[RMDB]
RNA sequence: GGGAACGACUCGAGUAGAGUCGAAAAGAUAUGGACUGAACUACUCGCGUAGUGGCGUUGAAAUCGGAAACGAUGGAGCCAUCAAGCGAGCAGUCCUAAGUCAAACGUGGAGGUUCGCCUCCACGAAGAGCCUAUUUAUCUUCGGAUAAAUAGGCUCAAAAGAAACAACAACAACAAC
Reactivity to 2A3 in 0.01 (KOAc 150mM, MgCl2 10mM, bicine 150mM(pH8.5), 24C), signal-to-noise 3, nucleotides 027 to 126: g030a010u060a050u150g000g000a010c000u010g000a060a040c030u130a060c000u300c000g000c010g010u060a020g010u000g010g000c040g170u300u020g030a050a050a000u010c000g010g040a050a050a020c010g010a000u000g030g010a010g000c000c000a030u080c030a040a000g000c000g000a000g020c000a000g000u010c000c010u020a070a010g040u020c050a050a050a110c020g000u000g000g020a020g000g030u090u060c210g080c050c000u010c000c010a000c000g000a010a030
Reactivity to DMS in 0.01 (KOAc 150mM, MgCl2 10mM, bicine 150mM(pH8.5), 24C), signal-to-noise 3, nucleotides 027 to 126: g000a070u000a300u010g020g010a000c010u000g000a050a030c070u000a280c000u000c010g010c000g010u000a270g020u000g000g000c010g020u000u010g000a090a160a020u000c000g000g000a130a100a160c010g000a010u000g000g000a080g010c000c020a000u010c030a260a300g000c000g000a000g000c000a000g020u000c010c000u010a030a090g000u010c020a060a100a220c010g020u000g000g010a010g020g020u000u010c300g000c020c000u000c000c000a000c010g010a060a080
This 177-nucleotide RNA was probed chemically with 2A3 and DMS. The RNA was probed in 150 mM KOAc, 10 mM MgCl2 and 150 mM bicine (pH 8.5) at 24 C. The 2A3 profile rests on 6,563 reads. For DMS the reverse transcriptase was MarathonRT. DMS (dimethyl sulfate) methylates the pairing face of unpaired adenines and cytosines.